[RMDB]
RNA sequence: GGGAACGACUCGAGUAGAGUCGAAAAGAAUAUCUCCUAUCCCUUAUGAGGAUUCCGAAGAGAAGGAAACUUGGUUGCCAGCCAGUAAGAAAAAUCAUGUUCCUGCGCCAAACGUCAUUCUCCGCAGGCUCUUACGGACAUUCGUGUCCGUAAGAGCAAAAGAAACAACAACAACAAC
Reactivity to DMS in 0.01 (KOAc 150mM, MgCl2 10mM, bicine 150mM(pH8.5), 24C), signal-to-noise 1, nucleotides 027 to 126: g000a030a090u040a050u050c100u050c060c050u020a040u000c000c010c000u000u060a120u000g000a030g030g000a260u000u010c020c000g050a170a150g000a110g000a130a080g000g000a070a030a100c020u000u000g000g000u000u000g000c000c050a060g000c000c030a010g010u010a090a080g030a000a040a090a020a070u000c050a080u050g000u020u000c000c000u000g030c040g000c130c000a010a000a130c090g000u060c040a160u000u000c020u050c070c060g000c150a110g000
Reactivity to 2A3 in 0.01 (KOAc 150mM, MgCl2 10mM, bicine 150mM(pH8.5), 24C), signal-to-noise 3, nucleotides 027 to 126: g090a100a140u140a100u080c020u000c000c000u030a030u040c010c000c000u060u170a190u220g050a110g070g040a090u060u010c020c030g100a140a040g080a040g080a140a030g020g000a040a040a000c030u060u070g050g000u100u100g040c010c010a000g040c010c020a000g070u090a110a030g090a090a050a050a050a010u200c130a070u080g040u070u000c000c020u000g010c020g030c020c000a120a150a040c030g000u010c030a050u050u010c030u030c070c040g010c030a010g050

Chemical mapping of a 177-nucleotide RNA with DMS and 2A3. For DMS the reverse transcriptase was MarathonRT. The reactions ran in a buffer of 150 mM KOAc, 10 mM MgCl2 and 150 mM bicine (pH 8.5), at 24 C. The 2A3 profile rests on 1,534 reads. It was measured as part of the RMDB library OK1LIB.